[RMDB]
RNA sequence: GGGAACGACUCGAGUAGAGUCGAAAAGAUAUGGAUGAUAGGGAGCUGUGGUGUCGGAAACGACACUCAGCGACGAUCUAUAUCCUAAGUCAAAAGUAGGGCAAUUAGUUCGCUAAUUGCCCUACAAGCAUCUCUUUACCUUCGGGUAAAGAGAUGCAAAAGAAACAACAACAACAAC
Reactivity to DMS in 0.01 (KOAc 150mM, MgCl2 10mM, bicine 150mM(pH8.5), 24C), signal-to-noise 1, nucleotides 027 to 126: g000a030u000a300u000g000g000a000u020g000a080u000a060g000g000g010a100g010c000u000g060u000g000g000u000g000u000c000g030g000a060a050a160c020g000a010c000a000c000u000c000a000g000c010g020a110c140g000a010u010c010u000a000u000a030u000c000c030u010a060a170g000u020c050a080a070a130a130g000u010a000g000g000g000c000a000a000u000u000a000g000u000u010c300g030c000u000a000a020u000u000g010c000c000c000u000a000c000a000a070
The record gives the reactivity of an RNA of 177 nucleotides to DMS.